This 177-nucleotide RNA was probed chemically with DMS and 2A3. The reactions ran in a buffer of 150 mM KOAc, 10 mM MgCl2 and 150 mM bicine (pH 8.5), at 24 C.

[RMDB]
RNA sequence: GGGAACGACUCGAGUAGAGUCGAAAAAAGGAAGCAGCAGUAAGUGGUUAUUCUUGUGUGCCGCAGGGAAGCCUAGGCCGAGCCAUGAACUUAUGUAGCGCAUAGGGUCGUUUCAUCGACAGUGGGUUUAGUGGAUGAAGUUCGCUUCAUCCACUAAAAAAGAAACAACAACAACAAC
Reactivity to DMS in 0.01 (KOAc 150mM, MgCl2 10mM, bicine 150mM(pH8.5), 24C), signal-to-noise 3, nucleotides 027 to 126: a050a060g000g020a050a090g010c040a080g000c040a050g010u020a070a150g030u020g000g000u020u020a110u010u010c040u010u040g030u010g030u010g010c020c010g000c080a050g010g020g000a060a080g030c040c070u000a110g030g010c030c030g010a120g000c050c040a040u020g010a090a050c040u020u010a030u000g030u020a080g010c100g000c000a030u020a060g020g000g020u000c030g000u000u000u000c030a050u040c050g000a020c060a110g020u010g030g000g000u010
Reactivity to 2A3 in 0.01 (KOAc 150mM, MgCl2 10mM, bicine 150mM(pH8.5), 24C), signal-to-noise 3, nucleotides 027 to 126: a020a020g120g010a070a000g020c020a000g000c030a020g030u130a080a070g030u090g080g000u050u030a120u220u050c050u010u010g060u040g090u200g070c010c090g000c040a000g000g050g010a040a070g040c020c020u080a080g070g030c050c080g010a030g000c000c010a010u080g080a030a020c020u070u010a060u150g050u090a010g040c030g000c060a030u110a040g000g000g070u000c000g050u070u000u040c110a120u040c020g050a100c040a080g040u040g060g000g000u060
It was measured as part of the RMDB libraries RFM100 and RFMREP.